[RMDB]
RNA sequence: GGGAACGACUCGAGUAGAGUCGAAAAACCGAGCGUCGUGGCGGGCGCUUGUGAGUCAGCUUCUUGACGGUAGAUGAGUGUGGAUGGAGUGAGAGGAGGAGUCCUGUGUAUGUCGUUGUCAACGUCGACCGAGCGUCCGUGCCAAGCGCUGCGUCACCUUUCAUUCGUGGUUCGCCACGAAUGAAAGAAAAGAAACAACAACAACAAC
Reactivity to 2A3 in 0.01 (KOAc 150mM, MgCl2 10mM, bicine 150mM(pH8.5), 24C), signal-to-noise 1, nucleotides 027 to 156: a000c020c010g010a030g000c030g000u050c010g010u110g020g000c000g000g000g020c000g000c000u000u020g050u040g050a080g000u010c030a030g060c090u100u070c020u040u070g050a030c020g000g030u110a030g000a070u090g020a040g060u160g020u050g060g020a070u060g000g030a070g000u040g000a080g010a070g000g020a030g000g030a020g010u030c020c020u040g010u020g010u120a080u100g080u020c030g060u060u080g020u070c040a130a070c070g050u040c060g050a010c040c030g000a010g000c020g010u060c020c040g030u000g030c030c000a010a010g000c020g010c070u050g010c030g060u060c010a070c000